[RMDB]
RNA sequence: GGGAACGACUCGAGUAGAGUCGAAAAGAUAUGGAAAUGUCGUGAAUCGCGUUGAUCUCGGAAACGAGGGAGCGAUACACGAGCAUUUCCUAAGUCAAAGUUUUUAGGUGUUCGCACCUAAAAACAACGUCAUAGUGUUGUUCGCAACACUAUGACGAAAAGAAACAACAACAACAAC
Reactivity to DMS in 0.01 (KOAc 150mM, MgCl2 10mM, bicine 150mM(pH8.5), 24C), signal-to-noise 2, nucleotides 027 to 126: g020a010u000a300u000g000g010a000a000a010u000g000u010c000g030u010g000a110a010u000c000g000c000g010u010u010g030a000u000c000u000c010g020g010a160a060a200c020g000a030g000g020g000a010g060c000g000a000u000a030c000a000c000g010a070g020c000a000u000u000u000c000c000u000a020a080g010u000c040a110a130a140g000u000u000u000u000u000a000g010g010u000g010u000u020c220g010c010a000c000c000u000a010a000a010a000a000c020a050a120
Reactivity to 2A3 in 0.01 (KOAc 150mM, MgCl2 10mM, bicine 150mM(pH8.5), 24C), signal-to-noise 1, nucleotides 027 to 126: g030a010u070a020u110g000g010a000a020a000u020g030u050c000g000u010g010a080a000u010c010g000c010g220u300u030g010a000u000c010u000c000g060g000a100a100a090c030g000a000g010g020g000a010g000c000g000a000u010a030c000a010c000g000a050g020c000a000u010u000u000c000c000u010a130a000g050u030c050a140a020a080g000u000u000u000u000u000a030g020g010u000g040u070u070c300g060c050a000c000c030u020a000a000a000a000a000c010a000a000